[RMDB]
Source: RMDB library OK2TRN, as collected in RNAgym. Chemical mapping of a 177-nucleotide RNA with DMS and 2A3. DMS adducts were read by reverse transcription with MarathonRT. The reactions ran in a buffer of 150 mM KOAc, 10 mM MgCl2 and 150 mM bicine (pH 8.5), at 24 C.

RNA sequence: GGGAACGACUCGAGUAGAGUCGAAAAUUGGAACAAGGUGUUCUUAGAAAGUGUAAUAGCACAGUUAACAGUGCUAUAUGGCCAGUAGGCAAGCCGGAUGGAUCAUGGAGGCUAACCAUUGAUUAUAAGUCAGAACGAAAUUCGUUUCGUUCUGACUAAAAGAAACAACAACAACAAC
Reactivity to DMS in 0.01 (KOAc 150mM, MgCl2 10mM, bicine 150mM(pH8.5), 24C), signal-to-noise 2, nucleotides 027 to 126: u010u000g000g000a070a090c060a140a140g020g020u000g000u000u000c020u000u030a120g010a080a110a070g010u000g010u000a090a010u000a010g020c000a010c020a070g000u010u000a080a150c200a070g030u000g000c000u000a020u000a020u020g000g000c010c030a090g010u010a030g000g000c100a060a130g010c040c020g000g000a090u000g000g000a020u000c060a060u010g000g000a070g010g020c070u010a050a080c020c000a050u010u030g010a060u010u020a060u010a110
Reactivity to 2A3 in 0.01 (KOAc 150mM, MgCl2 10mM, bicine 150mM(pH8.5), 24C), signal-to-noise 1, nucleotides 027 to 126: u050u080g050g010a060a030c010a040a060g110g110u040g000u050u000c000u010u030a070g060a100a140a030g110u100g020u180a010a110u020a010g050c010a000c000a050g000u130u160a160a070c080a110g000u060g010c000u000a010u000a000u040g090g060c000c010a020g040u030a030g050g100c030a020a000g060c010c010g020g000a020u070g100g000a000u020c020a020u020g010g050a070g070g000c050u010a010a020c000c070a070u060u130g050a070u070u230a110u000a160